Chemical mapping of a 177-nucleotide RNA with DMS and 2A3. The reactions ran in a buffer of 150 mM KOAc, 10 mM MgCl2 and 150 mM bicine (pH 8.5), at 24 C. For DMS the reverse transcriptase was MarathonRT. Values are in units of 0.01, from 0 to 300, in steps of 10. It was measured as part of the RMDB library OK2TST. For DMS, 3,035 sequencing reads were counted.

RNA sequence: GGGAACGACUCGAGUAGAGUCGAAAAAAAUGCUUGCUUGCGGAAAGUUAUCGCAGUUAAUAAACUUGUUACUGGUCGACUUCAAACAUACUUUUAAACUCAGCGUUGUCACUAUCUACCUGCACAAGUUAAAGGGAUGGUUCGCCAUCCCUUUAACAAAAGAAACAACAACAACAAC
Reactivity to DMS in 0.01 (KOAc 150mM, MgCl2 10mM, bicine 150mM(pH8.5), 24C), signal-to-noise 3, nucleotides 027 to 126: a070a070a080u000g010c050u000u000g000c040u000u010g010c090g010g000a080a080a060g010u010u000a050u000c080g010c050a050g000u000u010a080a060u000a040a080a050c100u010u000g020u010u000a060c060u000g000g000u000c030g010a060c050u010u010c080a100a060a070c060a040u000a050c080u000u010u000u010a030a060a090c080u000c080a060g020c060g010u010u010g020u000c030a060c110u010a040u000c040u000a080c060c020u000g000c090a040c140a060a080
Reactivity to 2A3 in 0.01 (KOAc 150mM, MgCl2 10mM, bicine 150mM(pH8.5), 24C), signal-to-noise 2, nucleotides 027 to 126: a000a000a000u090g000c010u020u040g000c020u000u040g020c030g030g060a090a110a040g060u100u050a100u090c060g000c030a000g020u030u070a120a020u080a070a100a010c020u080u070g040u130u100a030c040u060g070g020u040c050g020a060c010u040u020c040a000a090a030c010a050u190a110c040u170u110u080u150a050a080a040c020u020c090a020g010c020g140u070u060g120u060c000a000c040u030a040u000c010u060a100c010c010u040g050c070a020c020a140a090